[RMDB]
RNA sequence: GGGAACGACUCGAGUAGAGUCGAAAAAUGCCACAGUGUCUGGGCAAAGUAGGCUGUUUUUAAUAGUACUAACUUAAUCCACUGAUGGCUAUAGGAAAGCAUUGUGUAAUCCCCGAACACCUCUGUGUACAAAUAAAGAUUUCGAUCUUUAUUUGUAAAAAGAAACAACAACAACAAC
Reactivity to 2A3 in 0.01 (KOAc 150mM, MgCl2 10mM, bicine 150mM(pH8.5), 24C), signal-to-noise 9, nucleotides 027 to 126: a000u080g000c010c000a010c000a000g010u040g050u070c120u140g030g030g060c130a050a020a000g020u010a000g020g000c010u010g110u030u020u060u120u240a090a050u050a010g020u080a300c010u040a240a040c000u020u050a020a030u040c010c000a010c010u060g110a300u020g130g000c000u020a060u090a060g100g030a090a070a010g040c060a080u090u140g010u000g000u070a050a080u050c010c000c000c010g030a050a010c020a020c010c030u050c040u070g070u010g020
Reactivity to DMS in 0.01 (KOAc 150mM, MgCl2 10mM, bicine 150mM(pH8.5), 24C), signal-to-noise 9, nucleotides 027 to 126: a080u020g010c010c000a020c020a020g010u000g000u030c170u020g010g010g000c210a110a030a030g020u000a030g000g010c000u000g010u000u000u030u020u030a040a040u000a010g010u000a110c020u000a050a050c010u000u000a080a220u020c040c010a040c020u000g000a100u000g000g010c010u010a150u010a080g000g010a090a090a120g000c080a070u020u010g010u000g010u010a070a120u010c020c000c020c050g010a110a060c070a040c050c140u010c070u000g010u010g010